[RMDB]
Structure probing data (DMS and 2A3) for a 207-nucleotide construct. For DMS, 2,787 sequencing reads were counted. Source: RMDB library OK3TST, as collected in RNAgym. 2A3 adducts were read by reverse transcription with SuperScript II with manganese.
RNA sequence: GGGAACGACUCGAGUAGAGUCGAAAAUGGACAGAGUCGAGAGCUAUUUAGGAAGGAGAGCUGACAGACCUCGGGGACUGAAUGGAUGCUGGGAGUAGGGGUGAAAAGAGAGGAGUCAGGCUUCCUCCCAGAGUUUGAGGACUUUGAGUGCUAAGGGCAUUAUUUCAUCCUUCGGGAUGAAAUAAUGAAAAGAAACAACAACAACAAC
Reactivity to DMS in 0.01 (KOAc 150mM, MgCl2 10mM, bicine 150mM(pH8.5), 24C), signal-to-noise 1, nucleotides 027 to 156: u010g000g020a100c090a080g000a050g000u000c050g040a210g000a120g040c030u000a080u010u000u000a120g020g020a110a100g020g000a080g020a030g010c060u000g020a110c040a120g010a140c030c000u000c030g020g010g000g030a150c040u000g000a070a120u000g000g020a060u000g000c060u000g020g030g020a090g040u000a050g000g000g000g040u020g000a050a070a050a070g000a110g000a050g000g010a140g000u000c070a070g000g000c010u000u000c000c000u000c000c000c020a140g020a050g020u000u010u000g010a190g020g000a050c020u010u000u000g010a090g020u000g010c050u020a040a050g000g000g000
Reactivity to 2A3 in 0.01 (KOAc 150mM, MgCl2 10mM, bicine 150mM(pH8.5), 24C), signal-to-noise 4, nucleotides 027 to 156: u130g040g020a020c030a030g030a020g020u060c040g020a010g010a020g090c030u070a120u150u190u160a110g020g020a050a030g020g020a070g000a010g030c010u020g010a040c030a050g060a080c010c000u030c040g010g000g010g020a050c060u080g060a070a080u110g030g050a030u080g030c080u110g040g020g000a040g030u080a040g020g000g010g010u070g060a060a040a030a020g120a000g000a000g010g000a010g020u050c020a010g040g060c000u030u010c000c010u010c000c000c000a030g010a020g030u040u080u100g030a040g040g000a000c010u030u030u030g040a050g020u050g010c040u070a020a040g010g010g000